Chemical mapping of a 177-nucleotide RNA with 2A3 and DMS. The DMS profile rests on 5,131 reads. For 2A3, 6,049 sequencing reads were counted. The reactions ran in a buffer of 150 mM KOAc, 10 mM MgCl2 and 150 mM bicine (pH 8.5), at 24 C.
RNA sequence: GGGAACGACUCGAGUAGAGUCGAAAACACAGAUGGAACUACAAUAUGCAGAGUGUCCUACGCUUCUUUAGCGGAUGUUGACAGAGCAGUAGCCGCAGCCAAGGACGCCUUUGAGAACGGCGAAUGGCUGAUGUUAACGGUUCGCCGUUAACAUCAGAAAAGAAACAACAACAACAAC
Reactivity to 2A3 in 0.01 (KOAc 150mM, MgCl2 10mM, bicine 150mM(pH8.5), 24C), signal-to-noise 5, nucleotides 027 to 126: c050a000c010a010g120a110u120g070g020a060a060c050u100a030c050a090a090u130a140u300g040c030a020g070a050g220u060g020u000c000c000u040a050c020g000c010u090u080c020u120u300u140a020g000c020g040g050a050u070g040u100u070g060a040c050a050g080a030g010c020a020g010u050a010g000c030c000g000c030a010g000c020c000a020a000g060g020a030c010g000c000c020u070u080u120g270a260g010a050a020c050g020g000c020g020a040a050u040g040g000
Reactivity to DMS in 0.01 (KOAc 150mM, MgCl2 10mM, bicine 150mM(pH8.5), 24C), signal-to-noise 6, nucleotides 027 to 126: c070a110c120a080g010a080u010g010g010a080a110c040u010a060c080a080a100u010a090u000g020c040a050g000a120g020u010g000u000c010c020u000a120c110g010c020u000u010c290u000u000u000a050g030c030g000g010a080u010g000u000u000g000a070c040a050g020a160g020c030a060g020u000a060g020c030c070g030c100a060g020c020c040a040a070g010g000a150c060g010c020c020u000u000u010g010a130g000a090a100c260g000g000c020g020a090a100u020g010g000